[RMDB]
RNA sequence: GGGAACGACUCGAGUAGAGUCGAAAAUGUUGAAUGAAGAACUGCUGCAGCCUUUCGUUUGCGUAGUUAAUAAGAAACUGCUCGUACGAGUUUUUCUGGAAGAACUCGAAACCAUAAAUAUCCAGAACCCCUCGUGGAUAUUCGUAUCCACGAGGGGAAAAGAAACAACAACAACAAC
Reactivity to 2A3 in 0.01 (KOAc 150mM, MgCl2 10mM, bicine 150mM(pH8.5), 24C), signal-to-noise 2, nucleotides 027 to 126: u250g010u050u140g040a220a270u140g080a120a090g000a040a010c030u010g010c060u170g000c040a000g020c010c000u090u300u300c260g140u110u150u010g050c000g070u000a030g070u100u010a080a070u080a030a040g040a020a010a000c000u050g020c000u030c040g020u060a010c040g000a000g010u010u010u010u010u010c000u000g020g020a070a060g010a050a010c000u000c000g020a170a000a000c000c000a010u060a090a070a000u130a030u070c000c000a000g060a100a150

Description: This 177-nucleotide RNA was probed chemically with 2A3. The reactions ran in a buffer of 150 mM KOAc, 10 mM MgCl2 and 150 mM bicine (pH 8.5), at 24 C.